This 170-nucleotide RNA was probed chemically with 2A3 and DMS.
For DMS the reverse transcriptase was MarathonRT.
Conditions: 150 mM KOAc, 10 mM MgCl2 and 150 mM bicine (pH 8.5), 24 C.

[RMDB]
RNA sequence: GGGAACGACUCGAGUAGAGUCGAAAACAGCGAACAGAACGAUCGCUUCACGCGGUGGGAGCAAGACCAUAGCGAUAGGAAGAGAUGCUAGGAGUUGGUGGCGACCGGAGCGAGGAGAAAAGCAAAGCAACCCGGUCCUUCGGGACCGGGAAAAGAAACAACAACAACAAC
Reactivity to 2A3 in 0.01 (KOAc 150mM, MgCl2 10mM, bicine 150mM(pH8.5), 24C), signal-to-noise 2, nucleotides 027 to 129: c030a000g000c000g020a010a030c050a110g060a150a000c030g000a000u020c000g010c000u100u070c050a040c010g030c000g000g060u030g030g000g010a110g050c080a080a000g020a040c000c000a050u120a080g000c060g150a110u160a080g080g000a020a030g010a010g000a020u080g040c030u080a040g000g050a070g070u070u060g080g030u010g040g010c010g020a030c000c000g010g000a030g010c110g010a000g010g020a020g020a050a080a000a000g080c160a050a060a030g140c000a000a010
Reactivity to DMS in 0.01 (KOAc 150mM, MgCl2 10mM, bicine 150mM(pH8.5), 24C), signal-to-noise 3, nucleotides 027 to 129: c070a110g030c000g070a040a000c050a130g020a160a080c060g050a070u010c040g000c020u020u020c110a200c110g010c010g060g000u110g070g020g000a180g060c150a100a040g040a170c030c060a060u090a070g000c070g120a080u030a150g000g030a190a070g010a050g000a060u040g080c040u010a190g000g080a040g010u050u000g000g070u050g000g060c100g010a030c020c020g060g000a010g050c070g000a000g000g150a030g070a070a060a010a050g060c060a040a200a020g070c230a090a120